[RMDB]
RNA sequence: GGGAACGACUCGAGUAGAGUCGAAAAGGGGUCUUAUCCGCACCCUUGGAUUUAAGCGUGAGGUACACUGAAGCCUCCACGGUGUACUACCCACCACGCUUUGUCAGGGUGCGUGAUAAGACGGAGGCACCCAAACUCUGAACUUCGGUUCAGAGAAGUAUUGUAGAUCGUUCGCGAUCUACAAUACAAAAGAAACAACAACAACAAC
Reactivity to 2A3 in 0.01 (KOAc 150mM, MgCl2 10mM, bicine 150mM(pH8.5), 24C), signal-to-noise 3, nucleotides 027 to 156: g020g000g000g000u000c000u000u000a000u000c000c000g000c000a010c010c030c040u060u200g140g000a080u290u270u220a000a000g000c000g010u010g000a020g030g000u000a000c010a000c000u020g020a070a000g010c000c020u000c010c000a010c000g000g000u000g000u000a010c010u030a040c050c100c010a040c020c000a000c010g000c000u010u000u000g060u040c130a100g010g000g000u000g000c000g010u010g000a000u000a000a000g000a000c000g010g000a000g000g000c000a060c010c010c010a020a030a070c010u000c000u000g000a010a010c000u040u140c300g080g000u000u000c000a000g010a010g000a020a020
Reactivity to DMS in 0.01 (KOAc 150mM, MgCl2 10mM, bicine 150mM(pH8.5), 24C), signal-to-noise 2, nucleotides 027 to 156: g000g000g030g050u010c020u000u000a030u010c020c010g000c000a010c000c000c070u010u000g010g040a090u000u010u000a020a020g030c010g080u010g010a200g020g020u000a020c000a030c000u010g010a040a080g040c020c000u010c000c000a300c020g010g040u010g020u000a010c010u010a070c030c010c020a300c030c000a050c010g000c000u000u000u000g030u010c020a040g000g020g020u000g020c000g000u000g000a010u000a010a040g010a020c000g000g010a040g000g030c000a070c010c000c000a080a050a210c000u000c000u010g000a030a020c000u000u000c300g070g010u010u000c000a010g010a000g000a060a090
Structure probing data (2A3 and DMS) for a 207-nucleotide construct. Source: RMDB library RNAMAK, as collected in RNAgym. Values cover nucleotides 27 to 156. The DMS profile rests on 3,525 reads. Conditions: 150 mM KOAc, 10 mM MgCl2 and 150 mM bicine (pH 8.5), 24 C. The 2A3 profile rests on 6,388 reads.